[RMDB]
RNA sequence: GGGAACGACUCGAGUAGAGUCGAAAAGAUAUGGAAACUGGCAUGAACUACGCUCCAGUGUCGGAAACGACACGGAGCGCAUGCUUUCGAGUUUCCUAAGUCAAAGUCGGAUGUUCGCAUCCGACAAGACAGGUCUUAAGUUCGCUUAAGACCUGUCAAAAGAAACAACAACAACAAC
Reactivity to DMS in 0.01 (KOAc 150mM, MgCl2 10mM, bicine 150mM(pH8.5), 24C), signal-to-noise 3, nucleotides 027 to 126: g000a070u010a300u020g010g000a010a000a030c010u000g000g030c040a080u010g010a110a050c180u010a300c030g000c000u010c000c000a140g050u010g010u000c000g010g010a130a080a180c000g010a000c000a010c010g000g000a000g000c000g040c030a000u000g000c010u010u020u030c220g000a050g000u000u000u000c000c000u000a060a160g010u000c040a110a120a140g010u000c000g000g000a010u000g000u000u020c270g010c020a000u000c000c000g000a000c010a020a100
Annotation: Structure probing data (DMS) for a 177-nucleotide construct. Conditions: 150 mM KOAc, 10 mM MgCl2 and 150 mM bicine (pH 8.5), 24 C.